[RMDB]
RNA sequence: GGGAACGACUCGAGUAGAGUCGAAAAGAUAUGGAGUGCUGGGACAGCAACAGCCCUAUUCGGAAACGAAUAGGGACAUGCUGAAUCCCAGGCACUCCUAAGUCAAACACGCGCUUCGGCGCGUGAACAAUAUAGCCUCCUUCGGGAGGCUAUAUUGAAAAGAAACAACAACAACAAC
Reactivity to DMS in 0.01 (KOAc 150mM, MgCl2 10mM, bicine 150mM(pH8.5), 24C), signal-to-noise 3, nucleotides 027 to 126: g000a040u000a300u000g030g000a010g000u000g020c000u000g000g020g010a080c000a030g020c000a020a050c300a200g000c000c000c010u000a010u000u020c000g010g000a180a150a250c000g000a020a000u000a000g000g000g000a000c050a060u000g010c000u000g000a220a180u000c010c000c000a030g020g010c000a010c000u000c000c000u000a000a080g010u000c030a180a170a300c010a000c000g000c000g010c000u000u010c150g040g010c000g020c010g020u000g000a050a140
Reactivity to 2A3 in 0.01 (KOAc 150mM, MgCl2 10mM, bicine 150mM(pH8.5), 24C), signal-to-noise 1, nucleotides 027 to 126: g050a020u140a080u280g000g000a010g040u000g000c010u010g000g000g000a020c000a010g020c040a040a070c020a180g000c010c000c000u000a010u000u000c010g040g040a070a050a050c010g000a020a000u010a020g020g000g000a010c030a000u010g010c000u000g040a100a130u020c000c000c010a030g030g030c000a000c000u000c000c000u000a010a000g010u000c010a040a090a020c000a000c000g000c010g050c030u090u110c300g210g000c010g000c000g000u000g000a010a000